[RMDB]
Structure probing data (DMS) for a 177-nucleotide construct.
RNA sequence: GGGAACGACUCGAGUAGAGUCGAAAAUCAAGGCCCCCAAGCUGCCUGGUAAGUCAGAGGGACGGUUCAAGAUGCACCACUCGGCCGGGUGUGGUGGUUCACACCUGUAAUCCCAGCACUUUGGGAAACUAUGAGUCCCAUUCGUGGGACUCAUAGUAAAAGAAACAACAACAACAAC
Reactivity to DMS in 0.01 (KOAc 150mM, MgCl2 10mM, bicine 150mM(pH8.5), 24C), signal-to-noise 3, nucleotides 027 to 126: u010c080a130a130g010g010c100c030c000c010c000a030a040g030c150u000g000c100c040u000g000g010u000a070a110g010u000c020a070g010a100g000g000g000a090c090g020g010u010u000c100a080a130g000a090u010g000c110a080c020c020a090c050u000c040g000g010c050c030g000g010g010u000g010u000g010g020u000g020g000u010u030c020a030c020a010c010c000u000g000u000a040a200u000c130c000c010a040g010c050a040c060u010u000u000g010g000g010a080a080
The data come from the RNA Mapping Database (RMDB), library OK2TRN.